The record gives the reactivity of an RNA of 207 nucleotides to 2A3 and DMS. For DMS, 5,432 sequencing reads were counted.
RNA sequence: GGGAACGACUCGAGUAGAGUCGAAAAGCCUGCCAACGUUACCCUAACCUCGUUCUCUGUAAUUGACCAAGCCAUUGCCCGCACUGACGUUACGAUUCAGUGGGAUUCCUCUCCUAAUGCCAUUGAAUAUGAGGUUGAGUGGCGGCGAGAUGAUAUGUAGUGUUUAACUCUUCGGAGUUAAACACUAAAAAGAAACAACAACAACAAC
Reactivity to 2A3 in 0.01 (KOAc 150mM, MgCl2 10mM, bicine 150mM(pH8.5), 24C), signal-to-noise 3, nucleotides 027 to 156: g020c010c020u040g020c030c010a090a050c070g010u090u100a120c010c000c030u060a040a040c020c000u020c060g020u080u020c050u020c030u100g070u040a080a080u050u180g090a080c040c060a040a040g030c050c010a070u050u110g050c010c000c000g010c030a020c010u000g020a010c020g120u140u210a060c070g040a100u040u020c010a000g010u020g000g000g020a000u070u030c020c030u040c010u040c010c040u070a070a000u090g070c000c000a020u020u030g010a010a000u090a160u150g020a020g000g000u020u010g060a020g000u020g010g050c000g010g010c040g000a050g010a030u160g030a050u070a040u250g080
Reactivity to DMS in 0.01 (KOAc 150mM, MgCl2 10mM, bicine 150mM(pH8.5), 24C), signal-to-noise 2, nucleotides 027 to 156: g030c010c010u000g050c010c010a050a070c040g000u000u000a050c030c010c010u010a060a070c020c020u000c020g010u000u000c020u010c020u010g010u010a060a100u010u010g000a140c030c020a040a110g020c020c020a100u000u000g010c030c020c040g010c050a070c040u010g000a050c080g020u000u010a090c090g030a150u000u000c010a020g070u020g030g030g000a060u000u000c080c050u010c060u000c030c010u000a040a060u000g000c020c010a050u010u010g010a050a070u000a100u020g010a060g020g020u010u000g010a070g000u000g000g040c040g020g000c050g010a160g010a090u000g020a090u000a090u000g010
The RNA was probed in 150 mM KOAc, 10 mM MgCl2 and 150 mM bicine (pH 8.5) at 24 C. It was measured as part of the RMDB library OK3TST.